[RMDB]
RNA sequence: GGGAACGACUCGAGUAGAGUCGAAAAUGCUGUCGUUGACUGCGCCCAACGCUUCACAACCUGAAAGAAGCGCCUGUUAUCAGGACGGUUGAUCCAUUUACCGGUGCAGACCUCUGCAAACACCGGGUUUAACAAGCAUCUUUCGAGAUGCUUGUAAGGAUAACCGUUUGUUCGCAAACGGUUAUCCAAAAGAAACAACAACAACAAC
Reactivity to 2A3 in 0.01 (KOAc 150mM, MgCl2 10mM, bicine 150mM(pH8.5), 24C), signal-to-noise 1, nucleotides 027 to 156: u110g020c030u020g020u010c050g300u110u300g020a000c010u000g000c020g000c040c000c020a030a010c010g000c000u050u000c040a020c010a170a000c010c000u000g010a020a010a010g000a000a080g000c020g020c000c000u140g090u230u260a150u300c010a000g040g010a010c000g000g000u010u000g020a100u000c010c010a070u060u100u150a130c020c010g060g000u000g000c010a050g030a210c050c070u150c030u120g000c050a110a030a030c080a010c000c010g020g020g000u020u120u090a040a020c000a000a000g000c000a000u000c000u040u110u120c210g090a020g000a000u000g000c000u000u000g000u000a000a050
Structure probing data (2A3) for a 207-nucleotide construct. Values cover nucleotides 27 to 156. The 2A3 profile rests on 630 reads.